[RMDB]
RNA sequence: GGGAACGACUCGAGUAGAGUCGAAAAGACUCAGAAUGUGUUCACCCUCUUUCCUUCUGCCAUCGAUGCUGGAUGGCUCCCAUACGAGGAGGGGGAGUCUGCAGCUUCUCCAGAACAAGGGUCCAAAGGGUGUAGGUUGGUUCGCCAACCUACACCCAAAAGAAACAACAACAACAAC
Reactivity to 2A3 in 0.01 (KOAc 150mM, MgCl2 10mM, bicine 150mM(pH8.5), 24C), signal-to-noise 1, nucleotides 027 to 126: g000a000c020u000c030a000g140a030a290u040g090u040g100u100u140c010a010c000c040c030u020c160u030u000u170c000c000u000u000c070u130g000c000c000a130u160c090g140a000u190g250c060u040g020g170a020u090g000g020c090u000c000c000c060a090u000a250c160g030a100g000g000a090g000g030g030g000g000a000g000u000c170u100g210c130a000g000c000u000u000c040u070c070c000a060g070a000a090c100a100a000g020g000g000u010c000c030a020a020a020